RNA sequence: GGGAACGACUCGAGUAGAGUCGAAAAACCAACACCAUGCGGAGGGCUUUAUUGUUGGUCGUAGAUAAGCUGAGGGAAAUAUCGGGGGUGACUGAAGCAAUCGUGUCGACCUUCAUGGCCUACAUCAACACUGUAGCUUUUUCGAAAGCUACAGUGUAAAAGAAACAACAACAACAAC
Reactivity to 2A3 in 0.01 (KOAc 150mM, MgCl2 10mM, bicine 150mM(pH8.5), 24C), signal-to-noise 2, nucleotides 027 to 126: a000c010c000a000a020c020a050c060c050a090u190g080c090g060g060a050g070g010g020c000u120u220u210a120u200u150g010u010u030g000g000u000c010g020u010a030g000a020u020a110a060g000c030u010g020a040g050g010g080a030a230a050u300a150u280c140g000g030g000g000g030u010g020a030c010u020g000a000a000g010c000a000a000u020c020g060u080g080u260c020g000a000c010c080u000u000c030a030u060g020g000c000c020u000a020c020a040u130c020a010
Reactivity to DMS in 0.01 (KOAc 150mM, MgCl2 10mM, bicine 150mM(pH8.5), 24C), signal-to-noise 3, nucleotides 027 to 126: a100c010c000a120a130c130a080c120c060a090u010g010c140g020g020a260g010g000g020c010u010u000u010a050u000u010g020u000u010g030g030u000c030g020u010a110g010a040u000a060a080g030c020u010g020a300g000g000g020a080a100a180u000a080u000c250g010g020g010g000g020u000g010a150c020u000g000a170a010g000c020a090a060u010c010g010u010g000u020c020g010a030c020c010u000u010c050a020u000g010g010c010c000u000a110c060a070u010c090a080

Chemical mapping of a 177-nucleotide RNA with 2A3 and DMS. The 2A3 profile rests on 2,043 reads. For DMS the reverse transcriptase was MarathonRT. DMS (dimethyl sulfate) methylates the pairing face of unpaired adenines and cytosines. The DMS profile rests on 1,827 reads. Source: RMDB library OK2TRN, as collected in RNAgym. 2A3 adducts were read by reverse transcription with SuperScript II with manganese.